[RMDB]
RNA sequence: GGGAACGACUCGAGUAGAGUCGAAAAAGCUCCCUAUCGUCCCCACAUAGCAGAGCCCGGGAGCCCCUUCUAAAGUGACCGGGGGGGGUAGCUUGGAACAUAGGAGACGCAGUGGAGCCAUGGGAUGGAAUUAAAAACAGUUCGCUGUUUUUAAUUCAAAAGAAACAACAACAACAAC
Reactivity to DMS in 0.01 (KOAc 150mM, MgCl2 10mM, bicine 150mM(pH8.5), 24C), signal-to-noise 1, nucleotides 027 to 126: a110g020c020u040c000c010c010u000a120u000c060g000u020c000c000c000c000a120c270a110u000a040g050c130a120g000a260g040c120c000c010g020g000g020a160g000c000c020c040c030u000u040c020u000a070a110a160g020u000g010a070c160c150g030g000g000g000g010g000g010g050u000a080g050c000u000u000g010g060a120a090c050a210u010a090g030g010a050g020a090c050g020c270a060g010u030g030g000a080g020c010c000a020u000g010g010g010a140u000g000

This 177-nucleotide RNA was probed chemically with DMS.
The RNA was probed in 150 mM KOAc, 10 mM MgCl2 and 150 mM bicine (pH 8.5) at 24 C.